[RMDB]
RNA sequence: GGGAACGACUCGAGUAGAGUCGAAAAUGGUUCAACGGGCAUUAGAGACAGUAGAGUCAAUACUGUGGACAAUAAAGUAGAUUUUCAAAGUGUGACUGGUAACAAUAGAUCUUUAGAUGUAGAUACUUCACAUGCAGAACAUUGUAUGGGAGAAAGAAUGCUUGAAUGAAUUCGUUCAUUCAAGCAUAAAAGAAACAACAACAACAAC
Reactivity to 2A3 in 0.01 (KOAc 150mM, MgCl2 10mM, bicine 150mM(pH8.5), 24C), signal-to-noise 6, nucleotides 027 to 156: u060g020g010u040u040c030a050a030c080g020g020g000c020a030u040u070a060g020a020g020a110c010a020g040u060a010g030a020g040u050c020a040a010u040a030c010u010g010u060g030g040a040c030a070a070u080a150a090a010g050u080a040g030a140u060u090u080u120c090a090a100a070g030u040g010u020g080a030c020u020g030g020u050a050a000c020a020a050u070a050g040a070u020c030u080u140u080a060g000a050u060g020u070a010g010a060u050a090c010u020u040c040a060c000a250u010g000c000a010g060a240a060c030a130u100u080g000u010a010u020g000g010g030a020g030a030a060a010g130a030
Reactivity to DMS in 0.01 (KOAc 150mM, MgCl2 10mM, bicine 150mM(pH8.5), 24C), signal-to-noise 4, nucleotides 027 to 156: u000g010g020u000u000c030a070a100c090g010g000g040c020a090u000u000a120g000a270g020a080c010a070g000u000a060g010a150g020u010c100a090a150u000a070c050u000g020u010g010g000a090c080a030a090u000a070a100a120g000u000a110g010a130u000u010u020u000c050a060a090a110g020u000g030u000g000a040c030u000g020g020u000a070a060c040a030a060u010a090g000a060u000c020u010u000u010a100g020a070u000g010u010a080g020a100u010a050c060u010u000c030a020c000a040u010g000c030a060g010a120a190c120a100u000u000g030u000a050u010g010g000g020a080g000a080a060a140g000a110